[RMDB]
Conditions: 150 mM KOAc, 10 mM MgCl2 and 150 mM bicine (pH 8.5), 24 C. This 177-nucleotide RNA was probed chemically with 2A3. Source: RMDB library OK1LIB, as collected in RNAgym.
RNA sequence: GGGAACGACUCGAGUAGAGUCGAAAACACAGCGCACCAUCACCAUCGGGGCGGCGGGCACCCGCGGAUUGCGGACCUAUGUGCAGCUCUUCGUGCUCAUCGCGGCGGCCAACGACGUGCGCUGCGACGGGGUUUAGACCUUCGGGUCUAAACCCCGAAAAGAAACAACAACAACAAC
Reactivity to 2A3 in 0.01 (KOAc 150mM, MgCl2 10mM, bicine 150mM(pH8.5), 24C), signal-to-noise 1, nucleotides 027 to 126: c080a020c060a000g050c000g000c050a000c000c000a050u200c040a100c010c010a100u060c010g000g000g000g000c000g050g000c000g010g040g020c000a110c030c000c000g120c040g000g110a160u000u300g010c040g000g000a080c040c000u230a050u300g080u120g030c100a010g000c020u000c000u130u080c010g070u220g010c000u010c000a050u000c000g000c020g100g020c060g000g050c020c000a120a160c110g080a040c010g030u080g060c020g030c010u000g000c000g000a040